[RMDB]
RNA sequence: GGGAACGACUCGAGUAGAGUCGAAAACAGCGCCGAUCUGUCGAAUGCGGCCGGCCUGUUCAACGGUGUCGAACCGAUCUAUCCCGUGCCGCCAUACACGGGCACCGAGGCAGAUCCGGUGCUGGUGACACCAGGUCCGAUUCGUCGGACCUGGUGUAAAAGAAACAACAACAACAAC
Reactivity to 2A3 in 0.01 (KOAc 150mM, MgCl2 10mM, bicine 150mM(pH8.5), 24C), signal-to-noise 2, nucleotides 027 to 126: c010a000g030c000g030c020c000g000a000u000c000u030g030u030c010g060a060a060u270g030c010g000g000c000c010g000g000c000c030u020g060u190u200c100a240a110c000g030g020u210g030u170c030g030a060a050c010c000g030a040u000c010u130a240u040c000c000c000g000u020g010c040c020g050c000c020a120u300a090c000a000c000g000g030g000c080a020c020c130g030a050g010g000c020a000g000a010u050c090c040g000g000u010g000c010u010g000g010u070g080
Reactivity to DMS in 0.01 (KOAc 150mM, MgCl2 10mM, bicine 150mM(pH8.5), 24C), signal-to-noise 2, nucleotides 027 to 126: c030a000g020c050g010c010c020g010a080u000c010u000g000u000c000g000a120a140u010g000c040g000g010c140c030g000g000c010c010u000g060u000u000c250a090a120c010g010g000u010g060u000c100g000a120a100c000c040g010a090u030c140u010a090u000c010c000c000g020u000g000c040c120g030c210c150a010u000a300c020a010c000g010g000g000c070a050c100c030g000a060g000g000c010a020g020a030u010c080c030g020g010u020g000c010u000g050g010u000g020